[RMDB]
RNA sequence: GGGAACGACUCGAGUAGAGUCGAAAAGAUAUGGACCGUUGUGUAGGGAGUUCCCGUUCGGAAACGAACGGAAGAACGACGAUCUACCAACGGUCCUAAGUCAAAGGGAUGGGUUCGCCCAUCCCAACCCUUAAUUAAACUUCGGUUUAAUUAAGGGAAAAGAAACAACAACAACAAC
Reactivity to DMS in 0.01 (KOAc 150mM, MgCl2 10mM, bicine 150mM(pH8.5), 24C), signal-to-noise 6, nucleotides 027 to 126: g000a040u000a300u010g000g010a010c010c000g020u000u000g010u010g020u000a010g010g010g000a080g010u000u000c010c000c000g000u000u000c000g020g000a090a070a140c000g020a020a010c000g000g000a100a060g020a010a010c020g000a130c240g010a100u010c000u000a010c000c000a000a010c000g010g010u000c000c000u000a000a060g000u000c030a100a140a130g000g000g020a020u000g010g000g020u000u010c300g010c000c000c000a010u000c000c000c010a010a020
Reactivity to 2A3 in 0.01 (KOAc 150mM, MgCl2 10mM, bicine 150mM(pH8.5), 24C), signal-to-noise 6, nucleotides 027 to 126: g010a020u040a020u100g000g000a000c000c000g000u000u030g080u040g000u090a020g030g110g120a140g010u000u010c000c000c000g000u010u010c000g000g020a030a030a040c010g000a000a000c000g030g030a170a190g030a040a000c020g210a080c140g050a200u000c000u010a000c000c000a000a000c000g010g000u000c000c000u000a000a000g000u000c000a000a040a070g000g000g000a010u000g000g000g070u060u130c300g140c040c000c000a000u000c000c000c000a000a000